[RMDB]
RNA sequence: GGGAACGACUCGAGUAGAGUCGAAAAAUCGGCAACAGCGUGACGCUAAUCAAUGCAUGUGUGCGUGCCAUUUUAGAAACACACGCUGCACUGUUUCUCGGUGGCAUUCUCCUCCUGCGCGGAGGCGCGGAGGCGCUCGAUUCGUCGAGCGCCUCCGAAAAGAAACAACAACAACAAC
Reactivity to 2A3 in 0.01 (KOAc 150mM, MgCl2 10mM, bicine 150mM(pH8.5), 24C), signal-to-noise 4, nucleotides 027 to 126: a000u060c040g050g030c030a060a010c000a150g050c010g040u070g030a060c020g000c120u100a050a060u100c090a090a180u100g090c040a060u080g100u050g020u040g100c050g000u030g000c010c010a010u040u090u020u020a090g030a040a090a000c100a010c000a010c080g010c010u000g020c070a080c040u030g010u030u070u000c050u010c000g040g050u010g040g030c060a090u100u010c020u050c000c010u010c010c000u110g020c080g040c090g130g070a030g010g000c010g000
Reactivity to DMS in 0.01 (KOAc 150mM, MgCl2 10mM, bicine 150mM(pH8.5), 24C), signal-to-noise 1, nucleotides 027 to 126: a080u050c070g000g010c140a070a160c070a060g000c010g120u010g000a090c130g000c010u000a030a080u020c100a120a030u020g000c020a030u020g010u010g000u020g010c040g030u000g000c040c070a060u010u000u000u000a070g030a090a120a050c140a190c000a000c020g010c000u000g000c120a090c060u040g000u010u040u000c000u000c090g010g000u000g000g000c010a000u030u000c010u000c000c000u010c020c000u000g010c040g000c130g000g000a030g010g000c290g000